An RNA of 177 nucleotides, treated with 2A3 and DMS and read out base by base.
For DMS, 16,613 sequencing reads were counted.
Reactivities are given for positions 27 through 126.
2A3 adducts were read by reverse transcription with SuperScript II with manganese.
The 2A3 profile rests on 5,518 reads.
RNA sequence: GGGAACGACUCGAGUAGAGUCGAAAAGAGAGCUGCUUCGGCAGCUCUCCGUCAGGUAGUUCCUAUCUCAAUUAGCUGUAGUGGCCAACGUCCGGAUAGGAAGAGAGCCCUGCUUCGGCAGGGCUAAAAUCAAGUACUGUUUCGACAGUACUUGAUUAAAAGAAACAACAACAACAAC
Reactivity to 2A3 in 0.01 (KOAc 150mM, MgCl2 10mM, bicine 150mM(pH8.5), 24C), signal-to-noise 4, nucleotides 027 to 126: g020a000g000a010g010c010u010g000c030u090u090c260g100g000c020a000g000c000u000c000u000c000c000g070u070c040a070g040g170u140a030g110u060u000c000c000u010a010u000c050u000c020a100a300u120u100a050g010c030u040g020u220a050g070u160g140g000c000c030a080a040c050g070u050c040c020g010g000a000u010a010g020g020a020a020g060a010g000a000g040c010c000c000u000g000c010u000u020c120g080g000c010a000g000g000g000c000u010a000a010
Reactivity to DMS in 0.01 (KOAc 150mM, MgCl2 10mM, bicine 150mM(pH8.5), 24C), signal-to-noise 8, nucleotides 027 to 126: g000a020g010a020g020c000u000g010c000u000u010c200g040g020c000a000g010c000u000c000u000c000c030g000u000c140a110g010g010u010a100g010u000u000c000c000u000a020u000c010u000c100a110a130u000u000a040g000c010u000g020u000a210g010u010g010g010c010c030a020a040c110g000u000c160c160g000g000a020u000a010g000g010a030a050g000a160g000a040g000c010c000c000u000g010c000u000u010c190g030g010c000a000g000g010g010c000u000a000a010